[RMDB]
RNA sequence: GGGAACGACUCGAGUAGAGUCGAAAAGCAUGAAUGGAUCAAUGAGAUUCCCACUGUCCCUAACUACUAUACAGCGAAACCACUGCUAGGGGAACGGGCCUAGCAAAAACAGCGGGGAAAGAAGACCGCAACGAACAAGAUUCGUCUUGUUCGUUGCAAAAGAAACAACAACAACAAC
Reactivity to 2A3 in 0.01 (KOAc 150mM, MgCl2 10mM, bicine 150mM(pH8.5), 24C), signal-to-noise 3, nucleotides 027 to 126: g080c050a070u070g050a110a050u140g070g050a100u100c040a040a070u150g020a040g010a160u030u030c000c020c000a010c020u040g010u020c000c000c000u030a120a080c050u100a050c030u040a070u050a180c050a030g070c010g050a100a070a040c020c020a030c070u020g000c000u030a010g020g000g000g020a060a030c070g090g030g010c000c000u010a000g010c010a010a050a070a010a010c040a000g010c010g030g000g010g000a000a080a000g100a070a020g030a010c070c070
Reactivity to DMS in 0.01 (KOAc 150mM, MgCl2 10mM, bicine 150mM(pH8.5), 24C), signal-to-noise 2, nucleotides 027 to 126: g040c040a050u010g000a160a080u040g000g000a110u020c050a080a080u010g000a080g000a160u000u010c000c000c030a230c110u000g000u000c000c010c000u030a060a060c140u000a030c110u010a050u030a070c150a060g000c030g010a130a160a040c070c020a030c130u030g030c030u000a040g010g000g000g000a150a030c180g010g000g000c010c030u020a020g000c060a070a020a040a050a040c170a070g020c100g000g000g000g050a070a050a070g030a120a060g000a130c110c090

Structure probing data (2A3 and DMS) for a 177-nucleotide construct.